[RMDB]
RNA sequence: GGGAACGACUCGAGUAGAGUCGAAAAGAUAUGGAUGUAUCAUUGUCCUCCUUGAAGGGAGGUCGAUGUCGGAAACGACAUACCGACCGAAGAACUUCAAGGAGGACAAUGAGUACAUCCUAAGUCACGGUUAUAUACAGUUCGCUGUAUAUAACCGAAAAGAAACAACAACAACAAC
Reactivity to DMS in 0.01 (KOAc 150mM, MgCl2 10mM, bicine 150mM(pH8.5), 24C), signal-to-noise 5, nucleotides 027 to 126: g010a050u000a300u010g010g000a010u000g000u010a030u000c000a010u000u000g010u000c000c000u000c000c000u000u000g010a020a010g020g000g010a070g020g020u000c000g020a050u000g010u000c000g010g000a140a130a300c010g000a020c000a010u010a100c300c010g010a000c000c000g000a080a190g010a160a220c000u000u000c010a010a010g000g000a000g000g000a010c000a000a000u010g000a030g020u000a010c000a000u000c000c000u000a020a100g010u000c040a300
Reactivity to 2A3 in 0.01 (KOAc 150mM, MgCl2 10mM, bicine 150mM(pH8.5), 24C), signal-to-noise 2, nucleotides 027 to 126: g030a030u070a060u190g000g000a000u010g000u020a010u030c000a010u000u010g030u000c000c020u010c000c000u020u000g020a000a010g030g000g000a040g010g000u020c000g000a000u000g000u010c000g040g010a070a100a070c020g020a000c010a010u050a260c130c030g000a010c010c000g080a170a050g030a030a000c000u000u000c010a000a000g000g020a040g000g000a000c000a010a000u000g000a010g000u000a000c010a000u010c000c000u000a030a000g030u000c010a000